[RMDB]
RNA sequence: GGGAACGACUCGAGUAGAGUCGAAAAUUAAAGGAGGAGGAGGAGUGUGUGUCUUCCCAGCUGCUGAGUAGAACCUCCGCACACACGCGAAAGCUACGAGGAGCAGCAGUGCGGAAACGGUGAAAAACAGACUCUAUGACUUCGGUCAUAGAGUCUGAAAAGAAACAACAACAACAAC
Reactivity to DMS in 0.01 (KOAc 150mM, MgCl2 10mM, bicine 150mM(pH8.5), 24C), signal-to-noise 1, nucleotides 027 to 126: u000u010a030a100a090g000g010a100g010g010a050g030g030a070g010g010a120g000u030g000u010g010u000g010u030c070u000u000c000c000c080a290g010c010u000g030c000u000g030a150g030u010a080g000a070a210c070c010u000c050c030g000c040a050c070a130c100a080c120g000c040g000a110a150a080g000c020u000a030c090g030a080g010g020a050g010c020a010g000c030a090g010u000g000c080g030g010a040a070a070c070g000g000u000g000a020a050a040a090a130